The record gives the reactivity of an RNA of 207 nucleotides to 2A3. Reactivities are given for positions 27 through 156. For 2A3 the reverse transcriptase was SuperScript II with manganese.

RNA sequence: GGGAACGACUCGAGUAGAGUCGAAAAGACUAGUUCGCUAGUCCGAUACGAUAUGGAAUGGUGGCAUAGGGAGCGAAUGUGAGUCGGAAACGACUCCAUUCGCGAGGAUCUAUGCGUAACAUCCAUUCCUAAGUCUGCUAGACGCAUUCGUGCGUAAGAGGUUAGGUUCUUUCGAGAACCUAACCUCAAAAGAAACAACAACAACAAC
Reactivity to 2A3 in 0.01 (KOAc 150mM, MgCl2 10mM, bicine 150mM(pH8.5), 24C), signal-to-noise 1, nucleotides 027 to 156: g020a000c000u010a000g020u100u140c300g010c050u000a000g020u000c000c000g010a020u070a240c140g010a000u000a010u120g000g000a000a050u000g010g020u000g010g000c000a000u000a010g010g010g000a000g000c020g010a000a010u060g100u190g060a000g000u000c000g000g030a000a000a000c000g000a000c000u050c000c000a000u010u000c000g000c000g000a000g000g010a000u000c000u000a000u000g000c000g030u000a000a000c000a070u050c000c000a020u000u000c000c000u000a020a000g000u020c000u060g080c040u140a090g020a120c000g020c000a010u110u160c110g140u110g000c020g080u130a150a060